[RMDB]
RNA sequence: GGGAACGACUCGAGUAGAGUCGAAAACCAGCCACAAGGCGUGGCUGGCGGCGCGCCGGAAGUCCGGAGGGGCGUUCAUUUCUGCGACAGGACCCACUUCGCCAGGGUCUGCGCCUCGUCGUCGCUACUAUGAGGAGGGUUUCGACCCUCCUCAUAGAAAAGAAACAACAACAACAAC
Reactivity to DMS in 0.01 (KOAc 150mM, MgCl2 10mM, bicine 150mM(pH8.5), 24C), signal-to-noise 4, nucleotides 027 to 126: c000c000a070g000c010c010a010c030a170a130g030g020c230g040u000g010g000c020u010g000g010c040g030g000c020g010c140g020c020c020g000g000a280a180g020u010c030c020g010g010a300g000g030g000g020c040g020u010u010c090a060u010u000u010c050u020g000c050g010a050c210a140g020g000a050c040c030c030a100c130u000u000c070g010c090c090a100g000g010g010u000c050u010g000c020g010c010c000u000c040g020u010c020g000u000c010g010c040u000a070
Reactivity to 2A3 in 0.01 (KOAc 150mM, MgCl2 10mM, bicine 150mM(pH8.5), 24C), signal-to-noise 2, nucleotides 027 to 126: c000c010a000g000c040c000a070c030a130a140g300g010c090g030u010g010g000c020u020g010g000c020g010g020c000g000c010g000c000c030g040g030a260a090g120u070c030c000g030g010a030g040g020g000g000c050g070u030u050c020a050u110u270u170c120u130g040c050g050a040c060a140g070g000a080c010c030c010a120c020u170u210c030g040c090c040a050g000g000g000u010c030u040g000c000g000c000c020u030c050g130u050c010g010u010c000g050c040u080a060